This 207-nucleotide RNA was probed chemically with 2A3.
[RMDB]
RNA sequence: GGGAACGACUCGAGUAGAGUCGAAAAAGACAAAUUUGUCUACUUACAGAUGCAUCCUAUCUUAAAAAACAUUCGGUCGCAGCCCGAUCAAGGACGAGCUGAGGAGCACAACCCCGAGUUACAUUGUGGGAUUGCUGGAACUGGGGGCCUAGAAGAGGUAUCUCGUCUGAUUCGUCAGACGAGAUACAAAAGAAACAACAACAACAAC
Reactivity to 2A3 in 0.01 (KOAc 150mM, MgCl2 10mM, bicine 150mM(pH8.5), 24C), signal-to-noise 1, nucleotides 027 to 156: a000g050a010c050a010a160a130u090u250u300g010u000c000u020a050c030u080u110a030c030a050g050a120u050g000c000a010u020c000c060u140a180u150c040u190u190a140a180a060a060a030a040c020a100u170u020c010g090g000u100c040g000c120a030g040c020c010c040g060a020u100c140a040a130g010g040a010c020g010a000g000c050u080g040a020g020g000a000g030c000a000c000a070a020c000c000c000c030g010a000g030u090u070a050c060a110u090u090g020u160g080g040g020a050u050u080g010c040u010g000g010a080a000c000u000g020g000g000g000g000c030c000u120a080g010a100a000g130a040g010
For 2A3, 396 sequencing reads were counted.